[RMDB]
RNA sequence: GGGAACGACUCGAGUAGAGUCGAAAACAAUACCGCGAAGCUUACCGCUCUAUCAUCAGAGAUGGGUGAUUACCUAGGACACUGUAUGGAACUGUACAAGAGAUACGUCAUCACUAAGUCGGACGAGCUUGUGAUAGCCUUUCGAGGCUAUCACAAGAAAAGAAACAACAACAACAAC
Reactivity to 2A3 in 0.01 (KOAc 150mM, MgCl2 10mM, bicine 150mM(pH8.5), 24C), signal-to-noise 1, nucleotides 027 to 126: c020a020a210u100a140c000c030g090c060g070a060a000g000c040u080u080a060c000c000g020c020u000c020u060a100u150c020a000u060c030a000g030a030g010a190u090g050g040g000u060g040a050u010u140a070c010c010u030a040g000g070a030c040a030c060u050g000u080a030u070g020g140a080a060c130u100g010u070a020c000a000a070g060a020g020a120u030a090c030g040u000c040a040u000c000a000c100u090a040a050g010u080c040g070g020a050c070g040a020g070
Reactivity to DMS in 0.01 (KOAc 150mM, MgCl2 10mM, bicine 150mM(pH8.5), 24C), signal-to-noise 2, nucleotides 027 to 126: c060a140a070u010a160c030c050g040c080g000a120a180g020c030u000u000a130c040c060g030c020u000c020u000a070u000c060a080u000c050a030g020a140g000a040u030g040g020g000u000g000a040u000u000a040c020c020u010a100g010g000a100c140a060c030u000g000u000a040u000g000g010a050a130c080u000g030u000a000c080a090a070g000a100g000a090u000a020c100g000u000c010a040u000c040a070c060u000a060a100g010u000c040g020g010a060c090g000a100g010
The record gives the reactivity of an RNA of 177 nucleotides to 2A3 and DMS.
The 2A3 profile rests on 1,217 reads.
Values cover nucleotides 27 to 126.
For DMS, 1,083 sequencing reads were counted.